This 207-nucleotide RNA was probed chemically with 2A3 and DMS. Values cover nucleotides 27 to 156. Conditions: 150 mM KOAc, 10 mM MgCl2 and 150 mM bicine (pH 8.5), 24 C. For DMS, 1,816 sequencing reads were counted. For DMS the reverse transcriptase was MarathonRT. 2A3 adducts were read by reverse transcription with SuperScript II with manganese.
RNA sequence: GGGAACGACUCGAGUAGAGUCGAAAAGUGACGACUGCGGACACGAACGUAGACAGCAUCAUCGGCGUAGUUCCCUAACCAUCUAAGGAAUUGAGCCGCAACCUUUUUCGGGUUGUCGACCGUAUGGGGGCUAUGUGUGCCGCUGCUAGAGCGGCGGACCUACCUGGCAAUUCGUUGCCAGGUAGGUAAAAGAAACAACAACAACAAC
Reactivity to 2A3 in 0.01 (KOAc 150mM, MgCl2 10mM, bicine 150mM(pH8.5), 24C), signal-to-noise 2, nucleotides 027 to 156: g050u040g080a060c050g020a020c020u060g040c050g070g070a090c060a010c210g210a170a000c050g010u030a030g040a070c020a070g110c000a010u100c000a020u130c090g090g030c010g000u020a000g000u010u140c020c000c000u020a050a060c060c020a020u110c050u110a160a070g030g050a040a070u180u210g010a050g020c000c000g010c020a020a000c020c000u050u030u080u200u300c220g010g000g000u010u050g070u150c020g030a020c000c000g150u150a050u160g000g000g000g050g000c010u020a010u080g080u000g040u080g050c000c000g000c000u000g000c050u100a050g000a010g150c000g000g000c000g000g020
Reactivity to DMS in 0.01 (KOAc 150mM, MgCl2 10mM, bicine 150mM(pH8.5), 24C), signal-to-noise 1, nucleotides 027 to 156: g020u000g010a100c020g030a130c040u000g010c100g020g040a170c060a300c160g040a070a070c060g020u000a110g020a110c080a090g050c030a260u000c040a040u000c030g010g060c040g010u000a040g020u010u000c000c000c000u000a090a140c040c060a120u000c180u000a160a110g000g000a070a130u000u010g020a100g020c050c020g010c010a030a080c020c000u000u000u000u020u000c200g010g050g000u010u000g020u000c000g010a040c000c000g040u020a070u010g000g000g030g010g030c070u000a020u010g050u010g010u000g050c020c010g050c010u010g000c090u010a100g070a080g020c010g040g000c010g020g010